[RMDB]
RNA sequence: GGGAACGACUCGAGUAGAGUCGAAAAGUACACCCUCCCUCCCUCCCAAAAGCGCGCAAAUAAAGGGAGGGACUCAGGGAUGAGUAGGCCAAAAGGCCAUAUCCCGAUGACGCGCGACGGGACAAAACACAGUAAAAUCAUUCGUGAUUUUACUGUGAAAAGAAACAACAACAACAAC
Reactivity to DMS in 0.01 (KOAc 150mM, MgCl2 10mM, bicine 150mM(pH8.5), 24C), signal-to-noise 4, nucleotides 027 to 126: g020u020a140c200a170c030c010c020u000c010c010c000u000c010c010c020u000c020c010c020a050a060a110a180g030c010g000c000g000c070a070a090a110u010a050a100a110g020g000g010a000g010g000g010a010c040u000c130a060g020g020g010a070u000g010a070g010u010a120g030g020c000c010a050a070a070a160g010g030c000c010a060u010a080u000c000c000c020g010a090u010g010a120c040g010c000g000c000g000a150c070g000g000g010a070c200a030a040a090a170
Reactivity to 2A3 in 0.01 (KOAc 150mM, MgCl2 10mM, bicine 150mM(pH8.5), 24C), signal-to-noise 5, nucleotides 027 to 126: g020u060a040c040a110c070c000c000u010c000c000c000u000c010c000c010u020c010c010c000a040a140a010a010g020c020g000c000g010c060a080a090a050u180a090a130a030g000g000g000a000g030g000g010a000c000u020c030a040g000g030g000a010u070g010a020g110u300a120g010g000c020c010a070a300a150a160g010g000c010c010a030u070a030u050c000c010c000g000a110u090g060a030c020g000c000g000c000g010a010c000g010g020g000a010c050a030a110a030a010